[RMDB]
RNA sequence: GGGAACGACUCGAGUAGAGUCGAAAACGUACUCGGCACGUUGACGAUCGCGCUCGCCGGCAUCCUCGGGCCGCUGGCGAUCGUGCGCUUCAGCAUGUCGAUGCUCGGCAUUCAGGGCGGCGCAUUCGAGAGUUUACAUGUUCGCAUGUAAACUCUCAAAAGAAACAACAACAACAAC
Reactivity to DMS in 0.01 (KOAc 150mM, MgCl2 10mM, bicine 150mM(pH8.5), 24C), signal-to-noise 2, nucleotides 027 to 126: c050g010u020a070c140u000c000g020g010c000a030c040g020u000u000g010a060c040g010a030u010c010g020c010g000c100u010c030g010c020c000g010g020c030a090u000c050c000u030c190g030g000g040c210c130g000c030u000g010g030c000g000a010u010c020g010u000g010c070g020c030u000u000c020a020g000c020a000u010g010u000c020g020a030u010g000c030u000c030g010g010c080a090u000u000c080a100g010g010g000c060g000g010c050g020c110a130u010u010c120
Reactivity to 2A3 in 0.01 (KOAc 150mM, MgCl2 10mM, bicine 150mM(pH8.5), 24C), signal-to-noise 2, nucleotides 027 to 126: c030g030u050a050c040u010c020g000g000c000a010c010g020u010u030g020a010c020g040a070u170c010g000c000g000c020u020c000g000c020c000g010g000c010a040u040c010c030u110c090g090g070g000c060c070g010c020u010g000g010c010g010a000u030c000g000u010g000c040g000c000u020u020c000a000g000c000a010u020g010u020c010g000a010u050g020c030u020c020g060g010c060a080u110u090c060a110g050g050g000c030g020g000c050g000c040a060u120u190c100
Chemical mapping of a 177-nucleotide RNA with DMS and 2A3. Reactivities are given for positions 27 through 126. 2A3 adducts were read by reverse transcription with SuperScript II with manganese. It was measured as part of the RMDB library OK2TST.